[RMDB]
Notes:
The data come from the RNA Mapping Database (RMDB), library OK2TST. An RNA of 177 nucleotides, treated with DMS and 2A3 and read out base by base.
RNA sequence: GGGAACGACUCGAGUAGAGUCGAAAAGACGAAGCCCAGUGGGACGCCGUCAUCGCGGUGCAUCUCAAGGGGCACGCGGCGGUCUUGCAUCACGCCGCCGCCUACUGGAAGGCGCAGAGCAAGGCGAGGUGAUUACUGGAUUCGUCCAGUAAUCACCAAAAGAAACAACAACAACAAC
Reactivity to DMS in 0.01 (KOAc 150mM, MgCl2 10mM, bicine 150mM(pH8.5), 24C), signal-to-noise 4, nucleotides 027 to 126: g020a090c050g010a050a110g000c000c000c000a060g020u010g000g010g020a020c030g010c000c010g010u010c240a130u020c260g010c010g000g020u000g000c100a150u000c000u000c010a040a030g000g000g000g010c020a020c120g000c000g000g010c050g000g010u000c030u010u000g020c040a140u010c070a140c080g010c010c000g000c010c010g000c090c040u000a050c170u010g000g010a090a070g000g000c020g010c010a080g000a100g000c020a020a030g000g010c040g010a140
Reactivity to 2A3 in 0.01 (KOAc 150mM, MgCl2 10mM, bicine 150mM(pH8.5), 24C), signal-to-noise 4, nucleotides 027 to 126: g070a020c050g040a080a010g010c010c000c000a010g070u020g000g010g000a010c010g010c020c010g040u130c090a270u130c180g000c000g040g000u010g020c070a190u000c000u000c010a000a040g010g010g000g010c020a000c060g000c000g050g000c030g040g010u010c010u040u040g000c020a150u100c030a020c050g010c000c000g010c000c010g000c010c000u160a200c110u190g110g100a170a060g020g000c010g010c040a040g000a010g070c020a020a000g020g000c010g040a090
The 2A3 profile rests on 6,851 reads. Conditions: 150 mM KOAc, 10 mM MgCl2 and 150 mM bicine (pH 8.5), 24 C.